[RMDB]
RNA sequence: GGGAACGACUCGAGUAGAGUCGAAAAGAUAUGGACGAGAAGAAGCGAAGAACUAUGCUAAUCUCGGAAACGAGACAACAUAGGGAGCUUCCUCGUCCUAAGUCAAACGCUGUGUUCGCACAGCGAAGUGCUAUCUUUUCUUCGGAAAAGAUAGCACAAAAGAAACAACAACAACAAC
Reactivity to 2A3 in 0.01 (KOAc 150mM, MgCl2 10mM, bicine 150mM(pH8.5), 24C), signal-to-noise 2, nucleotides 027 to 126: g020a000u040a010u090g000g000a000c040g030a000g010a300a000g010a010a000g000c020g170a260a010g030a080a040c000u010a000u020g000c010u160a270a170u130c000u000c000g000g030a000a020a000c010g000a000g030a040c060a210a010c010a060u010a020g000g020g030a010g000c000u000u000c000c000u000c000g030u000c000c000u000a000a000g010u000c010a080a070a120c010g000c000u010g000u010g060u080u080c270g030c100a000c000a000g010c010g000a160a000
Reactivity to DMS in 0.01 (KOAc 150mM, MgCl2 10mM, bicine 150mM(pH8.5), 24C), signal-to-noise 1, nucleotides 027 to 126: g000a080u010a300u000g000g010a000c000g000a010g010a120a090g020a040a020g000c000g050a110a170g000a110a150c030u000a000u000g000c040u000a150a300u020c000u000c000g000g000a040a170a170c020g000a010g000a050c150a050a120c030a000u000a000g000g030g000a020g030c000u010u000c000c000u000c000g000u000c000c000u000a020a090g000u000c040a240a050a240c000g040c000u000g010u000g020u010u000c210g030c020a000c000a000g040c000g010a040a130